Source: RMDB library TTRDES, as collected in RNAgym. The record gives the reactivity of an RNA of 177 nucleotides to 2A3 and DMS. For 2A3 the reverse transcriptase was SuperScript II with manganese.

RNA sequence: GGGAACGACUCGAGUAGAGUCGAAAAGAUAUGGAGAAUGUAGGGAGCUCUGGGUCGGAAACGACCCUGAGCGAAGAACUAUGUUCUCCUAAGUCAAAACGUGCACCAGCUUCGGCUGGUGCACGAACAAAGAUAACUAGUUCGCUAGUUAUCUUUGAAAAGAAACAACAACAACAAC
Reactivity to 2A3 in 0.01 (KOAc 150mM, MgCl2 10mM, bicine 150mM(pH8.5), 24C), signal-to-noise 2, nucleotides 027 to 126: g010a010u030a020u070g000g000a010g010a030a010u020g010u040a010g080g070g180a300g030c010u010c010u010g020g000g030u000c010g010g010a010a010a010c000g010a000c000c000c020u020g000a000g000c020g000a080a040g030a010a000c010u000a000u020g020u010u000c010u010c000c000u000a010a000g020u000c010a000a030a070a190c020g000u000g000c020a020c040c010a040g080c000u110u280c300g140g010c000u010g030g070u010g000c000a000c000g010a000a000
Reactivity to DMS in 0.01 (KOAc 150mM, MgCl2 10mM, bicine 150mM(pH8.5), 24C), signal-to-noise 2, nucleotides 027 to 126: g010a020u000a050u000g000g000a010g010a030a000u000g000u000a010g000g020g020a110g040c000u000c000u000g000g000g020u000c000g030g000a020a020a030c000g010a020c000c000c000u000g000a010g020c000g010a060a060g000a180a300c000u000a010u010g000u000u000c000u000c000c000u000a000a080g000u000c010a110a050a160a230c000g030u000g030c000a030c010c000a010g020c010u000u030c260g040g010c000u000g000g000u010g000c000a000c000g000a030a120